[RMDB]
RNA sequence: GGGAACGACUCGAGUAGAGUCGAAAAAAUAAGAGUUUGGAUUUACCUAUAGGGAAUUAGCGAUCAAGAAUACAACCUAAGGACCUGGUUGACUUAAUUAUUCCAUAGGUUGGUGGAAGCUAGCGAAGAUACGCCCUUUUUUCGAAAAGGGCGUAUCAAAAGAAACAACAACAACAAC
Reactivity to DMS in 0.01 (KOAc 150mM, MgCl2 10mM, bicine 150mM(pH8.5), 24C), signal-to-noise 1, nucleotides 027 to 126: a050a080u000a080a020g000a030g040u000u010u010g020g000a080u000u000u000a080c060c010u000a070u010a130g020g000g020a140a050u020u000a000g020c020g000a030u030c060a080a100g010a150a080u000a050c020a020a030c050c030u010a070a040g010g010a110c300c190u000g010g010u000u010g000a040c110u010u000a020a020u000u000a080u000u000c000c000a130u010a000g010g000u000u000g000g010u000g010g000a000a150g000c070u020a020g000c090g000a100a110